[RMDB]
Chemical mapping of a 177-nucleotide RNA with 2A3.
RNA sequence: GGGAACGACUCGAGUAGAGUCGAAAACAAGCGAGAACUACUAAUAGUUUGUUCAGACUAGUUCUGUAUAAGCAAAACAGUUUUCGCAAAAACAGCCUGAGUUUCUUACUACCCAUUUAGCACAAAUCUCUCUCGAACAUUUCGAUGUUCGAGAGAGAAAAGAAACAACAACAACAAC
Reactivity to 2A3 in 0.01 (KOAc 150mM, MgCl2 10mM, bicine 150mM(pH8.5), 24C), signal-to-noise 2, nucleotides 027 to 126: c090a110a000g010c030g010a000g000a000a000c010u100a010c020u070a060a070u030a240g050u000u000u000g010u050u040c000a000g010a000c050u150a040g050u120u000c000u000g020u000a010u010a020a000g000c010a000a000a010a060c000a040g000u000u000u000u000c000g000c000a060a000a000a000a000c020a030g030c000c000u050g050a080g050u060u000u000c010u040u030a090c050u120a110c000c020c000a070u050u110u160a050g000c110a020c030a050a100a060u010

The RNA was probed in 150 mM KOAc, 10 mM MgCl2 and 150 mM bicine (pH 8.5) at 24 C.